[RMDB]
RNA sequence: GGGAACGACUCGAGUAGAGUCGAAAACAGGAUCACGACCUGCCUGAUGCCCGCGCGUGUCGCAUCCAUGAAGAACUCGUCGAAGAACUUGGUGCGGACGGCAUGGUGUUCGGCCAUACGGACCAUGUCAACUGGGUCAGUUCGCUGACCCAGUUGAAAAAGAAACAACAACAACAAC
Reactivity to DMS in 0.01 (KOAc 150mM, MgCl2 10mM, bicine 150mM(pH8.5), 24C), signal-to-noise 1, nucleotides 027 to 126: c040a050g000g010a090u010c050a070c070g000a120c020c020u000g010c010c010u000g000a160u000g000c010c010c070g040c100g000c010g000u000g020u000c010g060c020a060u000c020c080a040u010g000a120a070g060a090a100c010u010c000g030u010c160g020a120a040g020a120a130c030u010u000g000g010u000g000c030g000g000a100c070g000g000c030a070u000g030g030u000g000u000u020c090g000g000c010c130a100u000a120c040g000g000a050c010c020a040u010g000
Reactivity to 2A3 in 0.01 (KOAc 150mM, MgCl2 10mM, bicine 150mM(pH8.5), 24C), signal-to-noise 2, nucleotides 027 to 126: c000a040g040g020a020u080c060a040c140g100a110c000c000u040g060c020c010u090g020a050u070g080c030c040c000g050c060g000c020g040u090g080u060c010g000c030a040u060c010c060a080u030g100a110a160g050a100a050c030u010c050g260u140c190g210a160a040g030a100a060c000u040u060g010g000u020g000c000g000g030a000c020g000g040c010a020u130g000g000u080g110u130u070c000g070g030c080c030a050u090a050c000g050g000a000c000c000a040u110g070